[RMDB]
RNA sequence: GGGAACGACUCGAGUAGAGUCGAAAAACUUGGCUUCGGCCAAGUCAUCUGAUAUGGAGAUUCUCCCCACCGCUUAGAACUACAUGUGUGAUCGGAAACGAUCACCCAUGCUAAGCGAGGAAUCUCCUAAGUCUUCUGACCAAUAUUCGUAUUGGAACUGUCCUAAUUAUUUCGAUAAUUAGGACAGAAAAGAAACAACAACAACAAC
Reactivity to DMS in 0.01 (KOAc 150mM, MgCl2 10mM, bicine 150mM(pH8.5), 24C), signal-to-noise 2, nucleotides 027 to 156: a030c010u000u000g010g010c010u000u000c300g050g030c000c000a030a010g010u020c040a060u000c040u040g000a150u000a220u000g010g000a060g020a050u000u010c050u000c160c060c040c010a300c230c010g010c040u000u000a110g010a130a200c040u010a160c010a000u000g000u000g040u010g000a010u000c000g030g000a120a140a200c000g020a010u000c000a030c010c010c000a000u000g000c010u000a040a010g010c020g010a300g010g000a070a010u000c010u000c000c000u000a020a150g000u000c050u000u000c040u000g060a230c000c010a010a020u000a030u000u000c260g040u010a030u000u010g000g010a080a260
Reactivity to 2A3 in 0.01 (KOAc 150mM, MgCl2 10mM, bicine 150mM(pH8.5), 24C), signal-to-noise 2, nucleotides 027 to 156: a000c010u010u000g010g030c010u060u070c300g140g000c000c000a000a000g010u010c010a170u070c050u230g090a130u050a150u280g000g000a000g010a000u010u030c010u100c100c000c000c000a020c000c010g000c000u010u010a010g010a090a100c150u200a050c300a010u000g010u000g000u010g010a000u000c010g040g000a080a060a040c000g000a000u010c000a000c020c020c000a010u020g000c010u000a000a000g000c000g000a000g000g000a000a000u000c000u000c000c000u010a030a000g010u010c080u070u000c020u110g050a080c040c000a010a010u100a040u100u210c250g070u090a030u060u060g030g020a020a040

Overview
This 207-nucleotide RNA was probed chemically with DMS and 2A3. It was measured as part of the RMDB library RNAMAK. The DMS profile rests on 2,968 reads. The 2A3 profile rests on 3,662 reads. The RNA was probed in 150 mM KOAc, 10 mM MgCl2 and 150 mM bicine (pH 8.5) at 24 C.